[RMDB]
RNA sequence: GGGAACGACUCGAGUAGAGUCGAAAAUUGGAAGGCCUGUCUUAUGAGCGAUUUCCUGAUUGCCGAGGGUGUUUUCCGUUGGUGUGAAGCAACGAAGCACCUCCAGCCCUCUGGCAAGCGCGGUUAAACCUGAUUAAAUGUUCGCAUUUAAUCAGGUAAAAGAAACAACAACAACAAC
Reactivity to 2A3 in 0.01 (KOAc 150mM, MgCl2 10mM, bicine 150mM(pH8.5), 24C), signal-to-noise 5, nucleotides 027 to 126: u110u050g050g020a040a020g050g010c010c030u030g040u080c040u100u210a170u170g050a050g040c040g120a140u030u020u040c010c000u060g050a090u020u030g000c010c000g010a000g010g000g000u060g070u090u080u150u090c090c060g010u010u010g010g030u030g020u040g080a100a040g100c040a010a090c060g040a040a010g000c000a010c000c020u010c000c010a010g000c010c000c000u000c050u070g000g000c000a000a010g010c050g010c020g000g060u050u090a090a170
Reactivity to DMS in 0.01 (KOAc 150mM, MgCl2 10mM, bicine 150mM(pH8.5), 24C), signal-to-noise 8, nucleotides 027 to 126: u010u010g010g010a080a080g010g010c030c030u000g010u010c060u000u000a080u010g010a110g010c030g010a100u000u000u000c010c010u010g010a110u000u000g010c010c010g020a030g000g010g020u000g010u000u000u000u000c130c070g010u000u000g000g010u000g020u010g000a140a230g010c120a060a060c090g000a120a270g010c020a030c020c010u000c040c030a130g000c010c010c020u000c010u010g030g000c020a020a030g010c080g010c090g010g000u010u000a060a100